[RMDB]
The record gives the reactivity of an RNA of 177 nucleotides to 2A3 and DMS. Source: RMDB library TTRDEL, as collected in RNAgym. 2A3 is a SHAPE reagent: it acylates the 2'-hydroxyl of flexible nucleotides of all four kinds.
RNA sequence: GGGAACGACUCGAGUAGAGUCGAAAAGAUAUGGACUGGAACUACAGCGUAGAUUGCGAAGAACUCGGAAACGAGGGAGCAAUUCAAGCUGCCAGUCCUAAGUCAAACAAACCGUUCGCGGUUUGAACAUAGUGACUAUCUUCGGAUAGUCACUAUGAAAAGAAACAACAACAACAAC
Reactivity to 2A3 in 0.01 (KOAc 150mM, MgCl2 10mM, bicine 150mM(pH8.5), 24C), signal-to-noise 6, nucleotides 027 to 126: g040a020u090a050u150g000g010a000c010u010g000g030a070a040c120u180a070c300a000g000c010g010u030a010g010a020u000u010g030c020g150a300a020g010a110a060c000u000c010g010g030a060a070a050c010g000a000g020g000g000a030g000c000a000a000u030u050c010a050a000g000c010u000g000c000c000a000g000u000c000c000u000a010a000g000u000c020a020a080a120c010a010a010a000c020c000g020u090u100c300g000c030g120g000u010u000u030g010a060a010
Reactivity to DMS in 0.01 (KOAc 150mM, MgCl2 10mM, bicine 150mM(pH8.5), 24C), signal-to-noise 8, nucleotides 027 to 126: g010a030u010a300u010g010g020a010c000u000g000g000a090a020c050u030a300c010a000g010c010g010u000a300g000a010u000u000g000c000g000a090a140g000a100a180c000u000c000g000g010a120a070a170c010g000a020g010g000g000a090g000c000a010a010u000u010c020a300a300g000c000u000g010c000c000a000g010u000c000c000u000a010a070g010u000c030a090a140a300c020a010a000a010c010c000g010u000u000c230g020c010g010g000u000u000u000g010a130a240